[RMDB]
RNA sequence: GGGAACGACUCGAGUAGAGUCGAAAACAGAACUGGAUGGGCCGUGUGCUUAACCAGGACAAGAUCUCCUUCUCUCCAACGUUGUUGCCAACUCAUGAUUCUCCUAACCUGUGCUUGGCGAGACGUGCUACCAUAUAGGUGUUCGCACCUAUAUGAAUCAUAAUGUUAGGUUCGCCUAACAUUAUGAAAAAGAAACAACAACAACAAC
Reactivity to 2A3 in 0.01 (KOAc 150mM, MgCl2 10mM, bicine 150mM(pH8.5), 24C), signal-to-noise 4, nucleotides 027 to 156: c060a020g060a080a040c010u020g020g040a080u040g080g040g000c070c100g250u240g110u260g120c000u020u040a060a050c010c000a010g020g050a020c070a060a100g050a130u040c060u040c070c010u160u060c040u020c020u030c040c030a050a040c020g000u000u030g180u110u050g000c010c000a020a030c020u030c030a060u070g070a190u230u050c100u120c090c040u080a080a090c000c030u040g010u040g030c090u030u020g000g000c010g000a010g000a010c020g000u010g030c030u100a110c050c000a000u000a000u000a000g000g000u010g030u040u050c160g020c070a000c010c000u000a000u000a000u000g000a000a040
Reactivity to DMS in 0.01 (KOAc 150mM, MgCl2 10mM, bicine 150mM(pH8.5), 24C), signal-to-noise 4, nucleotides 027 to 156: c050a100g030a090a190c010u000g000g000a150u000g010g010g020c010c030g010u000g020u000g040c020u000u000a080a100c020c030a030g000g020a200c070a080a080g010a130u000c030u030c030c050u000u010c060u000c020u000c040c040a070a100c050g020u000u010g000u010u000g010c000c020a040a080c030u000c010a040u010g000a130u000u010c020u000c030c030u000a040a050c030c030u000g010u000g010c090u000u010g020g070c020g000a070g010a030c020g020u000g010c040u010a150c110c010a030u000a000u000a010g010g040u000g030u000u010c260g030c010a040c000c000u000a000u000a000u010g000a090a120